Overview
Source: RMDB library OK3TST, as collected in RNAgym. The record gives the reactivity of an RNA of 207 nucleotides to 2A3. The RNA was probed in 150 mM KOAc, 10 mM MgCl2 and 150 mM bicine (pH 8.5) at 24 C. Reactivities are given for positions 27 through 156.
RNA sequence: GGGAACGACUCGAGUAGAGUCGAAAAGUUUUUUCACAUAGUCACGCAGGCAGACGUGAUCGUACUGCCGCAGAAAAAUGCCCUGCAACAUGGUCAUAGCACGCUGAAAAACAAUGUUCCGCAGAUUGAACACCCCAUAGUCGCAACGGAUCACGUCCGCUAACUGUCAGUUCGCUGACAGUUAGCGAAAAGAAACAACAACAACAAC
Reactivity to 2A3 in 0.01 (KOAc 150mM, MgCl2 10mM, bicine 150mM(pH8.5), 24C), signal-to-noise 1, nucleotides 027 to 156: g000u000u020u000u000u120u150c080a090c090a050u130a120g020u110c020a040c120g040c000a040g040g030c030a010g000a020c000g000u030g130a140u090c000g010u140a120c040u050g010c000c000g030c040a010g060a060a000a000a000a000u020g050c000c000c000u000g020c000a090a060c020a170u170g010g000u030c030a010u090a060g060c060a000c080g030c060u130g050a020a000a010a030a030c030a010a130u100g020u040u000c000c000g000c040a040g030a110u120u160g030a080a010c000a020c030c000c000c000a040u070a090g070u030c040g040c020a080a000c050g040g010a000u030c080a000c060g040u000c000